[RMDB]
RNA sequence: GGGAACGACUCGAGUAGAGUCGAAAAUGCCGCCUCGCGAAAGGCUCUUAUGCGUUUCACAGCAUAAACAGCAUUGCGAAGAUCCGGUCUUUGCAUGACCAGUUAUGCACAAUUGAAUGGAUCUGUCACAUGUCGAUCAAUUCGUUGAUCGACAUGUAAAAGAAACAACAACAACAAC
Reactivity to DMS in 0.01 (KOAc 150mM, MgCl2 10mM, bicine 150mM(pH8.5), 24C), signal-to-noise 4, nucleotides 027 to 126: u030g010c050c090g010c030c000u020c020g000c100g000a060a100a090g000g000c020u000c190u030u000a000u000g010c040g000u000u020u040c170a080c200a170g000c010a010u020a000a020a050c230a080g020c000a020u020u040g000c030g000a010a010g000a010u010c050c050g000g030u010c050u000u030u000g000c000a010u000g000a060c110c100a210g010u010u010a030u000g000c040a000c300a120a080u020u000g000a110a080u010g000g000a060u000c000u000g000u050c270
Reactivity to 2A3 in 0.01 (KOAc 150mM, MgCl2 10mM, bicine 150mM(pH8.5), 24C), signal-to-noise 6, nucleotides 027 to 126: u150g020c000c000g010c020c010u060c010g000c020g070a110a020a010g100g000c000u000c010u030u060a050u040g010c000g090u050u150u220c270a180c060a050g000c000a010u010a030a090a020c020a010g010c020a030u030u210g000c010g000a040a010g010a000u000c050c040g130g070u020c050u040u040u060g020c010a010u010g040a130c030c020a010g030u070u020a020u060g050c030a030c080a210a190u140u180g090a060a080u110g020g020a010u000c020u030g050u070c030